[RMDB]
RNA sequence: GGGAACGACUCGAGUAGAGUCGAAAAUGAUGAUGUUGAAAAAGAACAUACUGAGACUGGGCUUGGUGGCUCACACCUGUAAUCCUAGCACAUUGGAAGGCCGAGGCAGGCGGAUUGCUUGAGCUCAGGAGUUUGAGACCAGCCUGGGCAAGAUGGAGUAUACCAAAAUAUUCGUAUUUUGGUAUACAAAAGAAACAACAACAACAAC
Reactivity to DMS in 0.01 (KOAc 150mM, MgCl2 10mM, bicine 150mM(pH8.5), 24C), signal-to-noise 2, nucleotides 027 to 156: u010g020a100u000g030a080u000g010u050u020g000a080a040a090a120a110g020a090a070c030a100u010a110c030u010g000a150g050a090c040u000g030g010g020c020u010u010g040g050u000g030g000c030u000c030a070c050a090c040c000u010g000u000a060a120u000c040c040u000a050g030c030a050c110a200u000u000g000g010a130a130g000g000c030c040g040a070g000g010c010a070g000g020c030g040g000a100u010u000g000c040u000u010g020a090g020c050u000c010a060g000g010a100g050u000u000u020g010a110g020a080c020c020a090g000c000c020u010g010g020g020c020a040a080g000a150u000g020g000a300
Reactivity to 2A3 in 0.01 (KOAc 150mM, MgCl2 10mM, bicine 150mM(pH8.5), 24C), signal-to-noise 3, nucleotides 027 to 156: u160g010a040u030g010a020u040g000u030u020g090a080a050a030a050a060g130a090a000c040a050u130a250c040u060g030a030g050a080c020u040g000g020g010c050u080u120g050g020u070g080g040c010u000c020a000c000a010c010c010u000g040u060a060a050u020c000c010u020a010g030c020a040c020a130u050u100g090g040a110a070g100g000c010c050g020a070g140g070c070a050g040g000c040g020g020a080u050u100g000c000u020u040g030a020g010c030u010c030a000g010g010a040g000u060u160u120g020a030g000a010c000c010a000g010c010c010u020g000g000g000c050a030a010g020a030u070g040g020a060

An RNA of 207 nucleotides, treated with DMS and 2A3 and read out base by base. Source: RMDB library OK3TST, as collected in RNAgym. The reactions ran in a buffer of 150 mM KOAc, 10 mM MgCl2 and 150 mM bicine (pH 8.5), at 24 C. For 2A3, 1,962 sequencing reads were counted.